The record gives the reactivity of an RNA of 207 nucleotides to 2A3 and DMS. For DMS the reverse transcriptase was MarathonRT. The RNA was probed in 150 mM KOAc, 10 mM MgCl2 and 150 mM bicine (pH 8.5) at 24 C.
[RMDB]
RNA sequence: GGGAACGACUCGAGUAGAGUCGAAAAUGUUUCUACUAACUUCUUGGUAGGACAAAGUGAAACAAUCAAGAAAAUAGCUUCUCCUCCUAUUUGUGGAAGAAAUUGAACUCCUCUAGAUGAUCUACUGACGAUAGUAUCUCCUUGACAGAUAUUGGACGACGUCAUAGAUGUUCGCAUCUAUGACGUCAAAAGAAACAACAACAACAAC
Reactivity to 2A3 in 0.01 (KOAc 150mM, MgCl2 10mM, bicine 150mM(pH8.5), 24C), signal-to-noise 4, nucleotides 027 to 156: u070g010u040u050u050c030u020a070c020u040a090a180c040u070u080c030u070u200g040g010u050a020g000g040a010c030a040a080a000g070u090g080a130a050a040c060a030a110u130c110a110a060g110a110a080a030a030u100a040g030c010u030u030c010u020c010c010u010c010c010u060a140u120u140u110g080u040g030g010a050a020g000a040a120a030u070u050g040a050a040c020u010c030c010u030c020u040a030g000a100u050g040a040u020c010u070a050c060u050g080a030c020g010a020u020a060g030u090a070u040c030u010c050c010u050u050g020a010c000a000g120a070u120a060u290u190g020g020a030c060
Reactivity to DMS in 0.01 (KOAc 150mM, MgCl2 10mM, bicine 150mM(pH8.5), 24C), signal-to-noise 1, nucleotides 027 to 156: u000g020u000u010u010c000u000a170c040u000a090a060c020u000u000c030u010u000g020g040u010a060g030g030a160c100a010a130a170g000u000g000a150a080a080c020a140a080u000c060a020a120g030a160a120a060a170u000a060g010c080u000u010c080u020c000c020u000c020c000u000a050u000u000u000g000u000g010g090a050a030g020a060a040a100u000u000g020a120a070c060u000c000c010u040c020u000a070g030a230u000g000a090u000c010u000a130c050u010g000a090c100g000a050u000a070g000u000a040u000c020u000c020c070u020u010g000a090c090a040g000a080u000a050u000u000g010g040a100c050

The DMS profile rests on 1,521 reads.